[RMDB]
RNA sequence: GGGAACGACUCGAGUAGAGUCGAAAAUCUUCGCCAAGUUCGGUUGGUGGCGGUAUUCGUACAACAACUUUCGCUAUUUUAAUUUUGUUUUUAAUUAACUUUAGUAAUAAUGCCGAUAAAACAUCCAAAAUCAACAUCUAUUCGUAGAUGUUGAUUUAAAAGAAACAACAACAACAAC
Reactivity to DMS in 0.01 (KOAc 150mM, MgCl2 10mM, bicine 150mM(pH8.5), 24C), signal-to-noise 3, nucleotides 027 to 126: u010c050u000u010c030g020c020c020a070a170g000u010u010c080g030g020u010u000g010g040u000g000g000c050g010g010u000a050u000u000c080g000u000a100c080a100a100c080a070a080c070u000u000u000c070g010c010u000a010u000u000u000u000a030a030u000u000u010u010g000u020u010u010u030u000a010a060u000u000a020a030c020u000u010u010a040g000u000a080a050u000a070a080u010g000c040c030g010a060u020a070a080a060a070c070a060u010c090c090a040
Reactivity to 2A3 in 0.01 (KOAc 150mM, MgCl2 10mM, bicine 150mM(pH8.5), 24C), signal-to-noise 2, nucleotides 027 to 126: u000c000u050u040c000g020c000c000a060a060g090u120u190c030g110g000u050u100g010g040u030g010g040c010g020g000u010a080u040u160c090g080u090a040c010a130a010c000a040a030c060u060u220u190c040g000c010u020a030u040u070u040u020a070a080u030u060u130u120g020u020u300u060u050u170a030a080u040u040a030a020c020u080u060u080a040g020u020a000a080u070a180a080u140g020c000c010g010a010u100a050a160a030a010c020a040u070c070c020a060
Notes:
Chemical mapping of a 177-nucleotide RNA with DMS and 2A3. For 2A3, 1,255 sequencing reads were counted. 2A3 adducts were read by reverse transcription with SuperScript II with manganese.